[RMDB]
The record gives the reactivity of an RNA of 177 nucleotides to DMS. It was measured as part of the RMDB library M2PK90.
RNA sequence: GGGAACGACUCGAGUAGAGUCGAAAAAGAAAUAGCGAUUCUCGAAGGAGUUGAGUCCUUCGAGGAUUGCUAAGCAAAGUUGCAGAACUAUCAAUGAACGACUUUGCUCAUCUUUGUAUACAAAAAAUCUUACUGAUAUCUUCGGAUAUCAGUAAGAAAAAGAAACAACAACAACAAC
Reactivity to DMS in 0.01 (KOAc 150mM, MgCl2 10mM, bicine 150mM(pH8.5), 24C), signal-to-noise 4, nucleotides 027 to 126: a010g010a040a160a300u000a000g010c000g010a010u000u000c000u000c010g000a030a010g000g010a040g010u000u000g010a250g010u000c010c000u000u000c000g000a010g010g010a000u000u000g020c010u000a010a020g010c010a010a010a010g000u000u010g030c120a060g040a110a110c140u000a220u020c230a110a110u000g000a120a150c020g000a000c000u000u000u000g000c000u000c300a040u000c010u000u000u000g010u010a100u020a040c050a010a020a120a030a040a060

The DMS profile rests on 3,371 reads. DMS adducts were read by reverse transcription with MarathonRT. Values cover nucleotides 27 to 126.